[RMDB]
RNA sequence: GGGAACGACUCGAGUAGAGUCGAAAAAUUGCGUUAAUUGUACUGAUGACCGUUGUGUGUUACAUUGUGCUAAUUUCAAUGUAUUGUUUGCUAUGACCAUGCCUAAGACUUGUUUCGGACCCAUAGUUGAACGUAGAGUUCGCUCUACGUAAAAGAAACAACAACAACAAC
Reactivity to DMS in 0.01 (KOAc 150mM, MgCl2 10mM, bicine 150mM(pH8.5), 24C), signal-to-noise 9, nucleotides 027 to 129: a100u040u030g020c100g010u020u020a080a050u050u000g020u040a070c070u000g010a080u000g000a090c060c040g000u000u000g030u010g000u000g020u000u000a010c030a060u020u000g030u030g020c120u020a060a080u040u030u010c050a000a000u000g040u010a020u010u000g040u040u020u040g000c060u030a050u000g030a000c050c030a060u040g020c040c030u010a050a100g010a060c080u010u010g020u000u010u010c060g010g000a180c040c010c030a090u000a080g040u030u020g020a080
Reactivity to 2A3 in 0.01 (KOAc 150mM, MgCl2 10mM, bicine 150mM(pH8.5), 24C), signal-to-noise 9, nucleotides 027 to 129: a010u110u110g010c030g030u040u050a090a040u150u080g030u080a050c040u060g090a110u060g040a060c000c050g040u060u070g040u020g020u000g000u060u050a020c000a010u010u030g020u000g030c070u120a120a090u080u110u090c050a020a010u030g020u030a070u060u080g090u060u080u070g030c020u060a070u100g020a040c010c020a020u090g030c010c010u080a090a040g030a050c010u040u050g060u070u040u020c010g010g020a040c000c000c020a020u050a060g040u000u030g030a050

Conditions: 150 mM KOAc, 10 mM MgCl2 and 150 mM bicine (pH 8.5), 24 C. The record gives the reactivity of an RNA of 170 nucleotides to DMS and 2A3. It was measured as part of the RMDB library 15KLIB. 2A3 adducts were read by reverse transcription with SuperScript II with manganese. For 2A3, 30,718 sequencing reads were counted.